The record gives the reactivity of an RNA of 207 nucleotides to 2A3.
The data come from the RNA Mapping Database (RMDB), library VIROID.
The reactions ran in a buffer of 150 mM KOAc, 10 mM MgCl2 and 150 mM bicine (pH 8.5), at 24 C.
RNA sequence: GGGAACGACUCGAGUAGAGUCGAAAAGGCGUUUCUUCCUCGAUUCGGCCCGGCUCAUCUCGACAAGAGGCGGCGAUCCUCAGUGCUCUUACUCUUUUCUGUAAAGAGGAGACUGCUGGAUCCGCCGCCCAAGUUCGAGAUGGGCCAUCUCCGGGCGGACAUCUCUAAACUUCGGUUUAGAGAUGUCAAAAGAAACAACAACAACAAC
Reactivity to 2A3 in 0.01 (KOAc 150mM, MgCl2 10mM, bicine 150mM(pH8.5), 24C), signal-to-noise 2, nucleotides 027 to 156: g050g000c050g000u000u000u060c020u050u040c010c010u050c040g280a300u050u070c050g040g010c010c010c000g000g000c000u020c010a020u010c000u010c000g010a020c020a110a140g110a100g030g000c020g000g000c000g010a000u000c010c010u010c000a070g020u110g260c030u010c020u130u260a270c020u020c010u030u080u160u110c170u290g260u300a050a050a000g000a000g000g020a000g000a000c000u020g100c090u010g000g000a000u000c020c160g000c000c010g000c000c000c000a000a000g000u090u030c000g000a000g000a000u000g000g000g000c000c000a000u000c000u000c000c000g010g020g010c060g000
The 2A3 profile rests on 886 reads. Values cover nucleotides 27 to 156.